[RMDB]
RNA sequence: GGGAACGACUCGAGUAGAGUCGAAAAGAUCGUCACAUGUAGUACGAUCAGCUAGGAUCAGACCAUGCUAGCUACUAGCUGGUACGCUAGUCGAGCGCUAGUCUCUAGAGUACGUACACAUGGUCUAAGCACCAGUAGAGUUCGCUCUACUGGUGCUAAAAGAAACAACAACAACAAC
Reactivity to DMS in 0.01 (KOAc 150mM, MgCl2 10mM, bicine 150mM(pH8.5), 24C), signal-to-noise 3, nucleotides 027 to 126: g010a040u000c030g020u000c090a140c120a090u000g010u030a140g020u010a020c010g010a080u020c030a080g000c020u000a010g000g000a090u010c150a030g010a010c050c040a030u010g010c020u000a080g020c020u010a090c020u000a040g010c090u000g010g030u000a050c230g010c110u010a010g010u000c110g000a120g010c080g000c030u000a040g010u020c020u020c000u000a010g000a110g030u000a130c060g040u000a060c100a110c000a010u000g030g030u000c030u000a120
Reactivity to 2A3 in 0.01 (KOAc 150mM, MgCl2 10mM, bicine 150mM(pH8.5), 24C), signal-to-noise 3, nucleotides 027 to 126: g030a070u080c040g030u080c070a080c040a190u120g060u280a130g010u030a100c010g010a140u070c020a010g020c010u040a010g020g100a080u130c080a020g020a020c010c020a030u150g000c020u030a030g050c010u040a030c000u000a010g120c050u090g090g120u130a050c070g000c020u000a000g010u040c060g080a020g110c040g010c040u010a030g010u000c000u000c000u100a030g000a000g060u150a030c050g040u050a000c030a000c000a020u030g000g040u020c000u010a070